[RMDB]
RNA sequence: GGGAACGACUCGAGUAGAGUCGAAAACGCUGGGUGAUAAAUCUAGGCGACACGACUAACUGAAGCGCGCACGGUUACGAUCGCUCAGAUUUGUUUGCCUGUGCUGAAGCGCGCACGGCAACCGAAAGGUGCGUACGUCACCCUUUCGAGGGUGAAAUAUGGGCUAUUUAUUCGUAAAUAGCCCAUAAAAAGAAACAACAACAACAAC
Reactivity to 2A3 in 0.01 (KOAc 150mM, MgCl2 10mM, bicine 150mM(pH8.5), 24C), signal-to-noise 3, nucleotides 027 to 156: c030g000c000u020g020g000g030u080g090a200u120a160a010a010u020c020u030a090g010g040c030g000a000c110a050c170g100a060c060u030a020a010c030u040g090a220a040g030c020g000c000g000c010a010c020g010g010u010u040a020c040g040a070u020c000g000c030u110c060a000g000a020u030u010u000g170u070u200u270g020c020c000u030g010u010g000c020u070g040a080a040g000c020g000c010g000c020a000c010g030g000c000a010a010c000c010g040a070a030a010g030g000u020g020c010g020u040a070c070g050u000c000a010c000c000c000u020u050u040c180g090a030g000g010g000u000g000a010a000a020
Reactivity to DMS in 0.01 (KOAc 150mM, MgCl2 10mM, bicine 150mM(pH8.5), 24C), signal-to-noise 2, nucleotides 027 to 156: c000g020c020u000g030g010g060u000g010a130u000a050a040a050u000c020u000a030g010g000c000g020a020c100a270c120g030a200c080u000a000a020c020u020g000a110a030g020c020g030c020g040c010a300c020g020g000u000u000a030c010g000a050u000c000g010c020u010c010a040g000a010u000u010u000g020u000u000u000g020c000c000u000g000u000g040c010u000g000a050a080g020c030g060c000g000c000a300c040g000g000c020a050a110c030c010g010a040a100a090g030g030u000g010c020g020u000a080c070g020u000c000a030c000c000c000u000u000u000c200g030a040g020g030g000u000g020a030a040a160